[RMDB]
RNA sequence: GGGAACGACUCGAGUAGAGUCGAAAAUCGGCGCUGUCGCUGCAUUUCUCGGACGGACAGAGCACGUGGGAUCUGCACGCGCACCUGCUCGCUGACCUCAUCAAGCACAUGGUCGGCGUCGAGUACACCGCCCGACCCGGCGCGGAUGACAAGUCGAAACCUUAGUAGGGUUCGCCCUACUAAGGUUAAAAGAAACAACAACAACAAC
Reactivity to 2A3 in 0.01 (KOAc 150mM, MgCl2 10mM, bicine 150mM(pH8.5), 24C), signal-to-noise 4, nucleotides 027 to 156: u040c000g040g010c020g020c130u040g040u110c020g020c030u020g040c020a030u020u110u010c040u010c010g070g030a070c020g010g030a070c040a110g100a060g090c050a010c030g010u030g000g040g050a110u040c030u140g010c020a010c070g000c010g010c030a020c020c020u030g060c040u050c020g000c000u040g020a030c000c030u110c020a120u040c040a180a080g060c080a070c030a110u150g000g000u010c020g010g020c020g040u090c030g010a020g020u020a040c030a010c090c010g020c030c010c000g050a140c020c030c040g050g000c070g000c000g040g010a020u040g030a020c030a100a020g050u060c010g040a050
Reactivity to DMS in 0.01 (KOAc 150mM, MgCl2 10mM, bicine 150mM(pH8.5), 24C), signal-to-noise 2, nucleotides 027 to 156: u000c040g100g020c040g040c060u000g020u000c010g050c030u000g050c070a170u000u000u000c010u000c020g000g040a080c010g000g010a300c020a060g000a100g020c020a030c040g030u010g020g030g000a150u000c090u010g050c000a030c040g010c030g030c020a070c040c010u020g000c030u000c030g020c030u000g000a040c040c060u000c070a150u000c060a110a160g010c060a080c070a040u010g010g010u010c010g000g030c020g010u010c030g010a120g000u000a080c050a090c060c010g030c030c020c020g000a080c020c060c080g000g040c050g000c030g020g000a110u010g010a030c050a060a110g000u010c010g010a090